[RMDB]
RNA sequence: GGGAACGACUCGAGUAGAGUCGAAAAAAAGGCAUCUACAAAGCCAUGAGUGAGUUUGACAUCUUCAUCAACUACAUAGAAGCCUACAUGACAAUGAAGAUACGAAACUGAGACAUCAGGGUGGCGACCAUGGGCUAUAGUUCGCUAUAGCCCAUGGAAAAGAAACAACAACAACAAC
Reactivity to DMS in 0.01 (KOAc 150mM, MgCl2 10mM, bicine 150mM(pH8.5), 24C), signal-to-noise 3, nucleotides 027 to 126: a050a040a070g000g010c010a090u000c050u010a060c090a080a160a140g000c030c010a030u000g000a090g050u010g010a070g010u000u000u000g010a120c110a040u000c000u020u000c010a020u000c070a080a060c180u010a120c090a100u000a090g000a120a110g000c070c000u030a070c090a030u000g000a100c170a070a050u010g000a050a050g000a050u000a110c140g000a050a050a030c060u010g000a080g000a070c100a060u000c050a060g030g010g030u000g000g000c090g020a140
Reactivity to 2A3 in 0.01 (KOAc 150mM, MgCl2 10mM, bicine 150mM(pH8.5), 24C), signal-to-noise 2, nucleotides 027 to 126: a000a000a000g060g000c010a060u010c020u070a070c050a010a060a020g000c010c000a030u020g000a020g070u080g010a010g000u000u030u140g090a090c070a040u000c040u020u020c020a010u020c040a060a090c050u150a010c080a080u090a020g110a090a010g110c030c010u050a090c050a100u080g070a030c020a020a040u030g010a020a000g000a010u060a070c100g060a050a010a010c030u070g010a040g070a110c020a100u040c000a010g010g000g010u010g000g000c000g020a020